[RMDB]
RNA sequence: GGGAACGACUCGAGUAGAGUCGAAAAUACACUCGUAUCCGGGUCUUUUGGGAACCGGUUCAUUUUAUCACAAGGGAACCUAAUAGCCAAUUGUGCAUCAAUCCUCUGCAAGUGUUACACAACAGGAGGCUAUUAACUAAUUCGUUAGUUAAUAGCCAAAAGAAACAACAACAACAAC
Reactivity to 2A3 in 0.01 (KOAc 150mM, MgCl2 10mM, bicine 150mM(pH8.5), 24C), signal-to-noise 9, nucleotides 027 to 126: u090a000c030a010c030u060c040g050u080a060u050c030c010g010g000g020u010c030u050u140u080u110g090g000g010a020a030c030c010g010g000u020u020c010a010u010u050u080u160a260u150c090a050c030a140a050g080g020g010a020a020c000c010u060a140a100u050a120g040c010c010a040a100u060u080g050u070g030c020a020u040c030a040a100u030c010c020u030c010u020g010c020a060a070g020u020g030u110u100a080c100a010c020a160a110c030a070g100g030a030
Reactivity to DMS in 0.01 (KOAc 150mM, MgCl2 10mM, bicine 150mM(pH8.5), 24C), signal-to-noise 5, nucleotides 027 to 126: u030a030c080a060c050u010c090g010u010a030u010c030c030g010g000g010u000c020u000u020u060u020g020g000g010a060a110c180c100g000g000u010u020c020a030u020u020u010u040a090u030c110a050c190a060a060g010g000g000a040a080c050c040u020a080a090u020a120g000c030c010a050a080u020u010g010u020g010c100a050u000c100a060a070u010c030c000u000c030u010g010c060a050a050g000u020g000u000u020a070c090a060c100a060a100c140a090g010g010a300

An RNA of 177 nucleotides, treated with 2A3 and DMS and read out base by base.
The data come from the RNA Mapping Database (RMDB), library OK1LIB.
The reactions ran in a buffer of 150 mM KOAc, 10 mM MgCl2 and 150 mM bicine (pH 8.5), at 24 C.